Source: RMDB library M2PK50, as collected in RNAgym. This 177-nucleotide RNA was probed chemically with DMS and 2A3. DMS adducts were read by reverse transcription with MarathonRT. The RNA was probed in 150 mM KOAc, 10 mM MgCl2 and 150 mM bicine (pH 8.5) at 24 C. For 2A3, 13,531 sequencing reads were counted.
RNA sequence: GGGAACGACUCGAGUAGAGUCGAAAACUCACGACGUUCGCGUCGUGAGAAAUAAAUUCAGCCGUAAUUCGAGCGCAAAUAUUACCGCUGAUGCGCUCGAAAAAAGGGUAUCCUUCGGGAUACCCAACUAAUACAUAGCGUUCGCGCUAUGUAUUAGAAAAGAAACAACAACAACAAC
Reactivity to DMS in 0.01 (KOAc 150mM, MgCl2 10mM, bicine 150mM(pH8.5), 24C), signal-to-noise 5, nucleotides 027 to 126: c000u000c000a000c010g010a010c000g020u000u010c210g040c010g020u000c000g020u000g000a000g000a010a040a050u010a050a070a130u010u010c090a100g010c060c070g020u010a070a190u000u000c010g000a000g000c010g010c010a020a060a130u010a110u000u000a100c080c070g020c070u000g000a150u000g000c010g010c010u000c000g000a000a000a020a090a050a030g000g010g010u000a000u000c000c000u010u000c190g030g010g010a010u000a000c000c000c000a010a010
Reactivity to 2A3 in 0.01 (KOAc 150mM, MgCl2 10mM, bicine 150mM(pH8.5), 24C), signal-to-noise 6, nucleotides 027 to 126: c000u000c000a000c000g000a000c000g010u030u090c220g000c010g100u010c000g000u010g000a000g000a000a010a000u060a010a040a020u110u060c050a040g120c050c040g100u120a050a180u050u010c000g000a000g000c010g000c010a010a070a030u230a120u200u160a140c030c050g040c120u060g010a030u040g000c000g000c000u010c000g000a000a000a000a000a000a000g000g000g000u000a000u000c010c000u030u060c200g100g000g000a000u000a000c000c000c000a000a000